Background:
Chemical mapping of a 177-nucleotide RNA with 2A3 and DMS. For 2A3, 1,665 sequencing reads were counted. Conditions: 150 mM KOAc, 10 mM MgCl2 and 150 mM bicine (pH 8.5), 24 C. The data come from the RNA Mapping Database (RMDB), library OK2TST. The DMS profile rests on 1,680 reads.
RNA sequence: GGGAACGACUCGAGUAGAGUCGAAAAUUUCUUAGAAGGAUGUUGCCUUCCGCCACUGAAACUUUUCUUAUGAAUGCCAUUAGAGGUAGGCGACGUAAACAGCGCAUGCAUAGUAGUUCUUCAAGUGGCAACAGAAUUGAUUCGUCAAUUCUGUUGCAAAAGAAACAACAACAACAAC
Reactivity to 2A3 in 0.01 (KOAc 150mM, MgCl2 10mM, bicine 150mM(pH8.5), 24C), signal-to-noise 1, nucleotides 027 to 126: u020u000u000c010u080u060a050g020a030a030g060g000a010u100g040u110u050g060c010c000u040u000c030c020g030c000c010a040c050u070g050a070a060a080c040u110u130u130u030c040u040u210a160u100g080a160a060u020g020c000c010a080u070u090a060g050a010g090g030u030a030g000g050c000g000a020c010g020u060a060a040a100c030a030g030c020g010c050a030u110g040c000a020u000a040g040u020a010g000u040u030c010u050u050c030a050a010g040u100g130
Reactivity to DMS in 0.01 (KOAc 150mM, MgCl2 10mM, bicine 150mM(pH8.5), 24C), signal-to-noise 2, nucleotides 027 to 126: u000u000u010c020u000u020a130g010a070a020g000g000a110u010g000u000u020g010c000c010u000u000c030c100g000c070c020a030c060u000g010a100a080a040c060u000u010u010u000c060u000u010a070u010g000a100a030u000g010c100c040a100u010u020a030g020a140g010g030u010a060g010g020c050g020a040c050g030u010a070a070a050c160a120g010c090g030c070a040u010g020c030a020u000a080g020u010a060g010u020u000c070u000u010c060a070a060g020u000g000